An RNA of 177 nucleotides, treated with 2A3 and DMS and read out base by base. DMS adducts were read by reverse transcription with MarathonRT. DMS (dimethyl sulfate) methylates the pairing face of unpaired adenines and cytosines. It was measured as part of the RMDB library OK2TRN. The RNA was probed in 150 mM KOAc, 10 mM MgCl2 and 150 mM bicine (pH 8.5) at 24 C.
RNA sequence: GGGAACGACUCGAGUAGAGUCGAAAAUUCGGAGGUCUAAUUGCCAACAUCAGACAGGCCCACCAGGCCGAAAUGACAUCUCACCUAGAAAAGGUUGCUACGGAACACCGAGCCAAUCUUCAGGCUCUACAAUCACAAAGUUCGCUUUGUGAUUGUAAAAAGAAACAACAACAACAAC
Reactivity to 2A3 in 0.01 (KOAc 150mM, MgCl2 10mM, bicine 150mM(pH8.5), 24C), signal-to-noise 3, nucleotides 027 to 126: u110u040c030g040g040a070g020g000u040c050u120a120a110u120u060g060c040c020a070a050c030a130u100c020a030g070a100c030a050g000g000c000c020c020a100c010c040a010g000g000c000c000g020a050a080a040u090g010a010c010a120u040c040u040c020a040c020c040u070a040g090a050a150a020a020g060g000u000u110g000c010u120a090c040g030g020a150a050c090a040c110c050g000a000g000c030c020a030a070u020c020u090u080c070a050g050g000c020u000c020
Reactivity to DMS in 0.01 (KOAc 150mM, MgCl2 10mM, bicine 150mM(pH8.5), 24C), signal-to-noise 6, nucleotides 027 to 126: u000u000c060g000g020a090g010g040u000c030u000a090a080u010u010g020c060c050a080a110c110a070u010c070a040g010a080c090a140g000g010c020c020c050a180c190c140a140g010g020c010c020g000a020a060a070u000g000a080c100a050u010c030u000c060a060c040c020u010a070g000a050a060a130a080g000g010u000u000g000c030u000a040c120g000g000a080a070c120a070c100c040g010a030g000c030c000a060a070u010c100u000u000c110a140g000g010c020u000c020